About this RNA:
Structure probing data (DMS and 2A3) for a 177-nucleotide construct. 2A3 adducts were read by reverse transcription with SuperScript II with manganese. Conditions: 150 mM KOAc, 10 mM MgCl2 and 150 mM bicine (pH 8.5), 24 C. The data come from the RNA Mapping Database (RMDB), library TTRDEL.
[RMDB]
RNA sequence: GGGAACGACUCGAGUAGAGUCGAAAAGAUAUGGAGAAUGAUCCGCAAGCCGUUUGACGUCGGAAACGACCGAGGCUUGACCCGGACAAUGUUCUCCUAAGUCAAAAGUUCUCCUUCGGGAGAACAAGCACGUUAUUUAGUUCGCUAAAUAACGUGCAAAAGAAACAACAACAACAAC
Reactivity to DMS in 0.01 (KOAc 150mM, MgCl2 10mM, bicine 150mM(pH8.5), 24C), signal-to-noise 2, nucleotides 027 to 126: g000a030u000a300u010g000g000a000g010a010a000u000g000a070u000c020c000g000c000a030a010g000c000c000g000u000u000u000g020a150c300g000u010c010g030g010a120a120a150c020g020a000c000c030g010a060g010g000c000u000u000g000a080c210c170c020g000g000a010c000a030a020u000g000u000u000c000u010c010c000u000a030a130g010u000c030a020a080a090a070g000u000u000c000u000c000c000u010u010c170g020g000g010a000g000a010a000c000a060a160
Reactivity to 2A3 in 0.01 (KOAc 150mM, MgCl2 10mM, bicine 150mM(pH8.5), 24C), signal-to-noise 2, nucleotides 027 to 126: g040a020u120a030u150g000g020a010g000a000a030u060g020a100u060c020c000g000c020a000a010g010c010c010g060u130u280u300g060a040c040g000u010c010g030g000a120a070a090c010g020a000c000c000g050a040g000g000c000u000u000g020a020c080c010c000g000g000a000c010a010a010u000g010u000u000c010u000c000c000u040a170a020g030u000c030a000a070a050a150g000u000u010c000u000c000c000u050u060c290g150g010g000a010g000a000a000c000a010a010